This 207-nucleotide RNA was probed chemically with 2A3 and DMS. For 2A3 the reverse transcriptase was SuperScript II with manganese. For DMS, 6,142 sequencing reads were counted. High 2A3 reactivity points to a flexible backbone, as in loops and unpaired stretches. The 2A3 profile rests on 2,968 reads.
RNA sequence: GGGAACGACUCGAGUAGAGUCGAAAAGGAUACCAGUACAGAAACUACUUUCCAUCUUGAAACUAUGCUGAUUCACAAAUCAGGGCAGUGGGCCAAAUUCUUCAUGAUGAUGCCGAUUGCAAAACGCGAUCCGCAAGGCGUAGGUUCUGCAAUGACGUAUGAGGAAAUCUUUCGAGAUUUCCUCAUAAAAAGAAACAACAACAACAAC
Reactivity to 2A3 in 0.01 (KOAc 150mM, MgCl2 10mM, bicine 150mM(pH8.5), 24C), signal-to-noise 4, nucleotides 027 to 156: g090g010a060u080a110c040c020a020g040u090a030c010a030g080a010a050a020c030u030a030c020u100u140u040c070c000a020u030c040u030u060g030a050a060a060c050u050a070u220g050c010u020g020a030u070u050c110a020c060a150a140a050u050c010a020g020g040g000c020a080g060u160g030g140g000c030c020a050a070a070u120u040c040u040u040c030a050u040g040a030u020g010a020u090g040c010c020g020a020u000u000g000c000a030a060a100a100c080g010c010g020a010u000c020c020g020c030a030a040g060g010c030g010u020a010g020g000u030u010c010u010g010c060a070a140u060g020a020c050g040
Reactivity to DMS in 0.01 (KOAc 150mM, MgCl2 10mM, bicine 150mM(pH8.5), 24C), signal-to-noise 3, nucleotides 027 to 156: g030g000a220u010a120c040c020a120g030u000a100c020a090g010a090a020a050c020u000a060c030u000u000u010c070c020a070u000c020u020u000g010a070a080a110c030u000a050u000g020c050u000g030a050u000u000c110a080c100a050a130a100u000c030a060g000g040g070c030a100g030u010g000g020g030c020c030a020a080a070u010u000c050u000u000c020a050u000g030a070u000g000a150u000g030c000c040g010a060u010u000g000c000a070a020a060a090c110g010c020g000a030u010c020c090g050c060a070a120g000g040c140g030u000a030g020g010u000u000c010u010g010c010a060a030u010g010a070c070g010